About this RNA
Chemical mapping of a 177-nucleotide RNA with DMS. The data come from the RNA Mapping Database (RMDB), library M2PK50. For DMS the reverse transcriptase was MarathonRT.
RNA sequence: GGGAACGACUCGAGUAGAGUCGAAAAUCUUAUAUGUUCGCAUAUAAGAAAAGGCGGAGUAGUGUUGGGUCGCGAAAGGCCAUAAAUUAACAAUCAGUCAGAUACAGACCUGGUUCGCCAGGUCUAAAUCUCUAUUGGGUUUCGACCCAAUAGAGAUAAAAGAAACAACAACAACAAC
Reactivity to DMS in 0.01 (KOAc 150mM, MgCl2 10mM, bicine 150mM(pH8.5), 24C), signal-to-noise 2, nucleotides 027 to 126: u010c000u010u000a020u000a010u000g020u000u010c170g050c000a000u000a000u000a000a000g000a050a060a110a090g010g010c010g000g010a060g000u010a110g000u010g010u000u010g010g020g030u000c050g030c050g000a060a110a120g000g010c020c010a060u000a040a040a100u010u020a040a090c090a120a080u000c140a100g000u000c120a050g000a120u000a100c180a010g010a000c000c000u000g000g000u000u000c220g010c020c010a020g010g000u000c000u010a000a050